[RMDB]
RNA sequence: GGGAACGACUCGAGUAGAGUCGAAAAUGAAGGGGAACCUCUGUGACUCGGAAUUCUAAGGCAGGUGUCUAGGAAUGAGACUUAUGUCUUCUCAGUCAGCCCAGACUAUGGGGCAUCUAUAUUCUCCAACAUGUAUUUGCUUGCUUUUAGAGCUCACAUUGUAGUAUCGGUUCGCCGAUACUACAAUAAAAGAAACAACAACAACAAC
Reactivity to DMS in 0.01 (KOAc 150mM, MgCl2 10mM, bicine 150mM(pH8.5), 24C), signal-to-noise 2, nucleotides 027 to 156: u000g010a080a130g000g000g080g020a100a100c050c020u010c010u000g010u000g020a160c020u010c060g000g000a140a090u000u000c030u000a080a070g060g020c010a090g050g030u000g020u000c030u000a110g040g000a100a080u000g000a080g020a030c090u010u010a080u000g020u010c030u000u000c030u000c060a080g020u010c030a140g030c010c020c010a150g020a060c100u010a120u010g020g000g020g020c080a020u000c020u000a080u000a140u010u000c030u000c000c030a070a120c100a070u000g010u010a090u010u000u000g020c030u000u000g000c030u000u020u000u000a140g010a090g000c020u020c060a190c180
Reactivity to 2A3 in 0.01 (KOAc 150mM, MgCl2 10mM, bicine 150mM(pH8.5), 24C), signal-to-noise 4, nucleotides 027 to 156: u110g010a030a040g020g000g050g050a010a040c010c040u040c100u070g040u040g030a040c020u010c040g030g090a040a080u180u030c040u070a090a050g050g000c030a020g000g090u080g030u090c070u120a070g030g090a130a100u160g030a030g010a000c030u160u100a050u130g010u000c000u090u050c030u030c040a010g020u010c020a020g010c000c020c000a000g020a030c020u040a100u120g000g000g010g030c010a010u000c040u030a070u010a040u160u060c060u000c040c010a030a040c030a130u120g090u200a140u100u120u110g020c020u030u030g000c030u050u110u060u130a070g030a020g040c030u030c040a070c000